Structure probing data (DMS and 2A3) for a 207-nucleotide construct. The DMS profile rests on 4,513 reads. Values are in units of 0.01, from 0 to 300, in steps of 10. The reactions ran in a buffer of 150 mM KOAc, 10 mM MgCl2 and 150 mM bicine (pH 8.5), at 24 C. The 2A3 profile rests on 2,370 reads. For DMS the reverse transcriptase was MarathonRT. 2A3 adducts were read by reverse transcription with SuperScript II with manganese.
RNA sequence: GGGAACGACUCGAGUAGAGUCGAAAAGGGAAUGGUGGUUUACCCCGUUAUCAAAUGAUUACCGACCAAUAAUUGGCGAAACUCGUUUCGCGUUGGCUGCCUAAUUCUAGGAAUUAGCGUGCCUUCAAAGACAUCAAGAAGUUCGCUUCUUGAUGAACAAUCCUAGUCGGUUCGCCGACUAGGAUUGAAAAGAAACAACAACAACAAC
Reactivity to DMS in 0.01 (KOAc 150mM, MgCl2 10mM, bicine 150mM(pH8.5), 24C), signal-to-noise 2, nucleotides 027 to 156: g010g010g010a030a080u000g030g020u010g040g000u000u000u000a180c020c010c010c000g030u000u010a090u000c120a020a040a100u000g020a130u000u000a070c010c010g020a070c020c010a080a100u010a080a130u000u000g030g040c010g020a110a080a070c050u010c130g000u000u010u000c020g020c020g040u000u000g030g000c050u010g000c120c020u000a010a030u010u000c020u040a120g050g010a070a010u000u010a010g000c030g000u000g010c020c000u000u000c040a040a090a100g010a230c020a010u000c000a020a010g020a030a020g010u010u010c300g020c050u000u000c000u000u000g010a000u000g000a040a100
Reactivity to 2A3 in 0.01 (KOAc 150mM, MgCl2 10mM, bicine 150mM(pH8.5), 24C), signal-to-noise 4, nucleotides 027 to 156: g030g010g010a110a080u170g010g040u050g010g040u060u070u270a150c020c000c000c010g100u090u060a140u140c070a080a110a090u190g030a030u060u090a030c010c010g040a060c020c030a020a040u190a130a070u090u150g060g000c020g010a030a020a030c040u060c070g080u020u020u000c020g010c000g020u010u020g000g020c020u080g030c000c010u000a030a010u020u020c080u080a100g260g070a030a010u010u010a010g010c030g060u030g000c000c000u000u010c020a030a040a020g070a040c010a000u000c000a000a010g000a000a010g010u030u130c160g040c100u000u000c000u010u000g000a000u000g000a020a010